The record gives the reactivity of an RNA of 207 nucleotides to DMS and 2A3. Source: RMDB library RNAMAK, as collected in RNAgym. Values are in units of 0.01, from 0 to 300, in steps of 10. The reactions ran in a buffer of 150 mM KOAc, 10 mM MgCl2 and 150 mM bicine (pH 8.5), at 24 C. The 2A3 profile rests on 3,885 reads.

[RMDB]
RNA sequence: GGGAACGACUCGAGUAGAGUCGAAAAGAUAUGGAUUGAUUUGUCAGGUGGAAAAGACGUCCAACAGCUCGGAAACGAGACAUGGACGUCGUAACACCUUGGAUUUAAUCAAUCCUAAGUCAAAAGUGAACGCGAAAGUUCGCUUUCGCGUUCACAACAAACGAGACAGUUUCGACUGUCUCGUUUGAAAAGAAACAACAACAACAAC
Reactivity to DMS in 0.01 (KOAc 150mM, MgCl2 10mM, bicine 150mM(pH8.5), 24C), signal-to-noise 2, nucleotides 027 to 156: g000a110u010a290u010g000g000a040u030u010g000a020u010u000u020g010u000c010a030g030g000u000g000g000a060a010a110a280g010a020c000g010u010c000c000a070a060c060a260g010c020u010c000g050g000a180a170a300c000g010a000g000a040c060a300u010g000g010a030c010g000u000c000g010u000a060a300c020a010c000c020u000u030g060g000a020u000u000u000a000a050u000c010a010a000u000c010c000u000a040a070g010u000c060a060a000a190a190g030u000g000a010a020c000g010c010g000a100a020a080g030u000u010c270g030c010u000u000u000c010g030c010g010u000u000c000a000c000a030a150
Reactivity to 2A3 in 0.01 (KOAc 150mM, MgCl2 10mM, bicine 150mM(pH8.5), 24C), signal-to-noise 3, nucleotides 027 to 156: g030a010u090a040u110g010g000a010u000u000g000a010u000u000u010g000u020c020a000g000g020u010g020g020a030a020a020a010g000a000c010g000u010c000c000a060a050c070a160g020c000u000c000g020g040a080a100a100c000g010a010g030a070c040a010u040g010g000a000c000g000u000c000g000u000a010a000c010a000c010c010u010u070g020g000a010u150u120u250a010a000u000c000a000a000u000c000c000u000a070a020g030u010c030a000a000a050a120g000u000g000a010a000c000g000c000g000a000a000a010g030u060u100c200g040c110u000u000u000c000g020c000g000u010u000c000a000c000a000a000